[RMDB]
RNA sequence: GGGAACGACUCGAGUAGAGUCGAAAAAGGGGGGUUACUCAUCAAGAAUUGGCCCUCACAGUGUGAGUAAACGACCUACCCAGGGGGGACAAGUUUUUCAAAUUUAAGACCCUGUUCUAGGUCUUCCAAGAGGGAGCUCUUCCCAAGAAUGGGAUCAAAAUACACUCAGAUUCGUCUGAGUGUAUUUAAAAGAAACAACAACAACAAC
Reactivity to DMS in 0.01 (KOAc 150mM, MgCl2 10mM, bicine 150mM(pH8.5), 24C), signal-to-noise 2, nucleotides 027 to 156: a100g000g000g030g020g060g000u000u000a060c040u000c020a090u010c080a100a200g020a070a130u010u000g000g000c020c010c020u000c020a110c080a150g020u000g020u000g000a050g010u000a030a070a120c060g010a070c010c010u010a070c040c010c010a150g000g040g030g020g000g020a120c130a060a170g010u000u000u000u050u000c070a130a070a130u000u000u000a170a270g000a040c000c010c000u000g000u000u000c020u000a060g020g010u010c010u000u000c040c030a040a130g010a170g030g020g000a100g040c090u000c040u000u000c010c010c010a090a070g020a110a090u010g010g030g000a030u010c020a030

An RNA of 207 nucleotides, treated with DMS and read out base by base.
The reactions ran in a buffer of 150 mM KOAc, 10 mM MgCl2 and 150 mM bicine (pH 8.5), at 24 C.
The data come from the RNA Mapping Database (RMDB), library OK3TST.
Reactivities are given for positions 27 through 156.
For DMS the reverse transcriptase was MarathonRT.